[RMDB]
RNA sequence: GGGAACGACUCGAGUAGAGUCGAAAAUGCCGCUUCGGCGGCAAACUCCUAAGUCUGAGCCCUUUAGGGAGAUCGCUGAACUGUCGGAAACGACAGAUACGAAUAAGAUCGAAGAACUAAAGAUGCUCAGAUAUGGACUAACGUUCCUUCGGGAACGCGAACCUAUACCGUUCGCGGUAUAGGUUCGAAAAGAAACAACAACAACAAC
Reactivity to DMS in 0.01 (KOAc 150mM, MgCl2 10mM, bicine 150mM(pH8.5), 24C), signal-to-noise 1, nucleotides 027 to 156: u000g020c030c020g070c020u000u030c290g050g090c040g000g020c000a000a010a110c060u010c000c030u000a050a200g010u010c000u040g010a120g040c000c120c020u030u000u000a050g020g020g000a240g000a040u000c000g020c020u000g000a180a290c000u000g030u000c000g010g000a140a100a200c000g010a060c000a020g000a150u000a080c100g000a100a150u000a050a110g000a020u000c050g000a080a140g010a250a300c020u020a000a020a040g000a000u000g000c010u010c020a050g000a030u000a070u000g000g010a070c070u020a040a150c010g000u000u000c000c000u000u000c300g060g000g000a000a000c020g000
Reactivity to 2A3 in 0.01 (KOAc 150mM, MgCl2 10mM, bicine 150mM(pH8.5), 24C), signal-to-noise 4, nucleotides 027 to 156: u030g000c010c000g030c030u070u050c260g190g000c000g020g000c010a040a030a060c070u050c050c000u070a180a010g020u000c000u000g000a000g000c000c060c000u000u000u000a010g000g000g010a020g010a010u000c010g030c140u120g090a110a080c000u000g020u000c000g050g010a130a100a060c010g000a000c010a000g000a010u160a040c050g030a080a120u210a260a060g000a000u000c010g070a230a010g000a080a040c000u010a000a000a010g020a070u110g000c000u000c010a000g000a000u000a010u020g020g010a040c060u140a230a010c080g000u000u000c000c000u040u040c230g050g000g010a000a000c010g030